[RMDB]
RNA sequence: GGGAACGACUCGAGUAGAGUCGAAAAGAUAUGGAUGGUGUCGAGCCUACUACCCACCUUGUUCGGAAACGAACAAGAGGUAGGAACUACUCGCACCAUCCUAAGUCAAAGGGCUGUUCGCAGCCCACAGUGCAACUGAGUUCGCUCAGUUGCACUGAAAAGAAACAACAACAACAAC
Reactivity to DMS in 0.01 (KOAc 150mM, MgCl2 10mM, bicine 150mM(pH8.5), 24C), signal-to-noise 3, nucleotides 027 to 126: g010a090u010a300u000g000g020a030u000g000g020u000g020u010c020g030a020g000c050c080u000a170c010u000a050c010c000c030a300c180c000u010u000g010u000u000c010g010g010a110a120a230c000g010a000a000c000a000a010g000a040g000g000u010a000g020g000a040a080c150u010a300c000u000c000g010c010a020c000c000a000u000c010c010u000a020a100g000u030c080a140a210a120g000g020g040c000u000g010u020u010c210g020c010a020g000c020c000c020a000
Reactivity to 2A3 in 0.01 (KOAc 150mM, MgCl2 10mM, bicine 150mM(pH8.5), 24C), signal-to-noise 3, nucleotides 027 to 126: g110a060u300a120u300g000g010a010u010g000g000u040g150u300c070g000a010g040c000c000u000a030c000u080a070c020c010c040a090c030c020u000u000g010u000u000c000g030g050a070a090a090c000g000a020a000c000a000a000g030a010g000g020u020a010g010g000a050a040c100u260a050c010u240c020g000c010a010c000c000a000u000c000c000u000a000a000g020u020c080a110a090a130g000g000g020c010u010g060u130u180c300g000c260a000g000c000c000c010a010
Conditions: 150 mM KOAc, 10 mM MgCl2 and 150 mM bicine (pH 8.5), 24 C. An RNA of 177 nucleotides, treated with DMS and 2A3 and read out base by base. For 2A3, 5,738 sequencing reads were counted. The data come from the RNA Mapping Database (RMDB), library TTRDES.